[RMDB]
The data come from the RNA Mapping Database (RMDB), library OK2TRN. Chemical mapping of a 177-nucleotide RNA with DMS and 2A3. For 2A3, 45,101 sequencing reads were counted.

RNA sequence: GGGAACGACUCGAGUAGAGUCGAAAAUCUUGGAGACACACUCUGGAUACCAUAGGUGCAGGACCUCUAGAAGGCAUGUCCGAACCCUGUGUUUUCGAGCAAACGACCUUAACCGAGGUGAGGUCCGAUGCUAUAACUUAUUCGUAAGUUAUAGCAUAAAAGAAACAACAACAACAAC
Reactivity to DMS in 0.01 (KOAc 150mM, MgCl2 10mM, bicine 150mM(pH8.5), 24C), signal-to-noise 9, nucleotides 027 to 126: u000c020u000u010g020g010a050g010a130c140a070c130a100c070u000c040u010g010g010a070u000a110c080c050a100u010a040g010g010u000g010c130a120g010g000a060c020c020u000c040u010a150g010a090a050g010g010c070a070u000g010u000c040c040g000a070a120c130c080c080u010g010u000g000u000u000u000u000c020g000a090g010c150a050a070a160c080g000a060c000c000u000u010a040a100c070c070g010a070g000g010u010g000a040g000g010u000c010c050g010
Reactivity to 2A3 in 0.01 (KOAc 150mM, MgCl2 10mM, bicine 150mM(pH8.5), 24C), signal-to-noise 9, nucleotides 027 to 126: u020c010u040u160g060g010a030g030a020c040a000c010a030c130u040c050u060g040g010a040u050a120c020c020a060u090a070g050g000u050g050c090a050g030g040a050c010c000u030c010u050a080g040a150a020g100g000c080a040u080g040u010c050c030g030a050a060c020c010c040u040g010u000g010u050u010u010u030c020g010a020g020c040a050a090a050c040g030a040c010c000u090u190a070a030c030c040g040a100g040g050u080g020a020g000g020u000c020c020g010